[RMDB]
RNA sequence: GGGAACGACUCGAGUAGAGUCGAAAACCCAGUUCCGGGGCCGUUCACUGGAUCCGAAGCCUCUAGAAGGAUAAUAUAGGCACUCCAUACCCUACUCCGACUAAAUACGUCCCCGUCGUACAGAAUGCAAGGGCAUCCCUGUUCGCAGGGAUGCCAACAAAUAGAUACAGUUCGCUGUAUCUAUUUGAAAAGAAACAACAACAACAAC
Reactivity to 2A3 in 0.01 (KOAc 150mM, MgCl2 10mM, bicine 150mM(pH8.5), 24C), signal-to-noise 3, nucleotides 027 to 156: c030c000c000a030g060u110u010c050c020g020g000g040g020c000c000g030u100u090c070a070c120u040g040g000a140u080c020c030g040a040a030g050c000c000u060c040u110a170g070a190a050g150g010a040u080a190a110u150a120u110a060g000g000c020a040c070u050c020c010a070u080a170c030c000c000u030a070c060u030c060c020g060a040c070u110a050a100a100u120a050c010g030u040c000c000c000c000g040u030c030g000u040a070c000a080g120a180a040u120g060c050a040a060g030g020g030c000a000u000c000c000c000u030g020u030u070c170g000c050a000g000g000g030a000u000g010c000c010a000a000
Reactivity to DMS in 0.01 (KOAc 150mM, MgCl2 10mM, bicine 150mM(pH8.5), 24C), signal-to-noise 2, nucleotides 027 to 156: c010c000c020a150g010u000u000c040c020g000g010g020g020c050c020g020u010u010c100a160c100u000g040g010a070u010c030c050g040a140a210g020c020c000u000c020u030a130g000a160a140g020g000a230u000a080a180u010a150u000a060g040g000c050a080c060u000c090c060a210u010a100c090c030c000u010a080c090u000c020c040g000a170c050u000a090a070a110u000a070c040g010u000c000c010c010c020g000u000c040g030u000a110c060a080g010a100a190u000g000c070a050a080g040g000g010c010a020u000c010c010c010u000g010u000u000c270g040c000a030g000g010g030a020u010g000c010c000a000a020
Overview:
Structure probing data (2A3 and DMS) for a 207-nucleotide construct. 2A3 adducts were read by reverse transcription with SuperScript II with manganese. The RNA was probed in 150 mM KOAc, 10 mM MgCl2 and 150 mM bicine (pH 8.5) at 24 C. DMS adducts were read by reverse transcription with MarathonRT.